Structure probing data (2A3 and DMS) for a 177-nucleotide construct. For 2A3, 2,706 sequencing reads were counted. For DMS the reverse transcriptase was MarathonRT. 2A3 adducts were read by reverse transcription with SuperScript II with manganese. In probing experiments dimethyl sulfate is read out at A N1 and C N3, which are open when not base-paired.
RNA sequence: GGGAACGACUCGAGUAGAGUCGAAAAGAUAUGGAAUCACCAAGCAACAGCGUGUGGCGGUCGGAAACGACCGAAUCACGACAUGCUUGAGUGAUUCCUAAGUCAAAGCUAGUCUUCGGACUAGCAACAGCAAUCUUCUGUUCGCAGAAGAUUGCUGAAAAGAAACAACAACAACAAC
Reactivity to 2A3 in 0.01 (KOAc 150mM, MgCl2 10mM, bicine 150mM(pH8.5), 24C), signal-to-noise 2, nucleotides 027 to 126: g000a000u050a020u240g000g000a020a000u010c000a010c010c000a000a010g010c030a010a220c090a200g230c020g020u040g060u110g210g040c070g000g000u020c010g010g010a070a080a020c020g000a000c000c030g010a010a020u080c020a010c010g120a070c070a100u300g000c000u030u000g050a170g040u000g000a000u020u000c000c000u010a010a000g010u020c010a090a000a120g000c000u000a010g010u000c010u050u170c300g090g000a010c020u000a000g000c020a010a000
Reactivity to DMS in 0.01 (KOAc 150mM, MgCl2 10mM, bicine 150mM(pH8.5), 24C), signal-to-noise 2, nucleotides 027 to 126: g010a030u000a300u000g030g000a000a000u000c000a000c000c010a000a000g050c020a060a140c300a300g020c010g010u000g000u020g030g030c050g010g020u000c000g000g010a160a110a240c020g000a000c000c000g000a090a060u000c000a030c000g010a040c150a140u000g000c030u000u000g000a150g000u020g000a000u000u000c000c000u020a020a050g000u010c030a100a050a190g010c000u000a010g000u000c020u000u020c200g010g030a030c000u000a020g000c000a040a040